[RMDB]
Source information
Conditions: 150 mM KOAc, 10 mM MgCl2 and 150 mM bicine (pH 8.5), 24 C. The record gives the reactivity of an RNA of 177 nucleotides to DMS and 2A3. Values cover nucleotides 27 to 126. DMS adducts were read by reverse transcription with MarathonRT.
RNA sequence: GGGAACGACUCGAGUAGAGUCGAAAAUAUAUCGUGCAAACCUAAUGAUAGGUAACCGAUUGGUACGUGUCUCAGAUCAUUAGUUACAGCUGCAGGAUUGCUUCUUCACGUCAACUUAAACGAGGUGAGCACGUUAUUCUUUCGAGAAUAACGUGCUAAAAGAAACAACAACAACAAC
Reactivity to DMS in 0.01 (KOAc 150mM, MgCl2 10mM, bicine 150mM(pH8.5), 24C), signal-to-noise 2, nucleotides 027 to 126: u090a030u040a000u020c010g030u020g030c090a030a170a120c230c020u000a100a060u060g000a050u000a000g040g000u000a160a020c000c040g000a140u010u000g000g000u000a060c090g010u020g010u010c050u030c030a010g010a000u000c000a010u000u000a020g000u000u020a080c210a110g000c050u000g000c000a000g000g010a040u000u000g000c060u010u000c020u030u010c030a030c000g000u000c030a060a080c300u020u040a050a040a140c160g020a010g000g030u000g000
Reactivity to 2A3 in 0.01 (KOAc 150mM, MgCl2 10mM, bicine 150mM(pH8.5), 24C), signal-to-noise 4, nucleotides 027 to 126: u250a020u030a040u010c070g020u010g000c010a110a060a060c000c000u030a040a040u110g090a080u030a050g000g130u060a060a020c010c000g120a190u050u160g010g020u070a040c020g040u080g120u080c000u010c060a060g020a060u010c000a000u000u070a030g040u110u090a060c030a070g060c080u040g040c000a020g000g050a100u000u110g090c030u040u050c000u000u020c020a010c040g190u000c030a050a140c110u110u190a200a080a020c070g010a000g050g020u050g010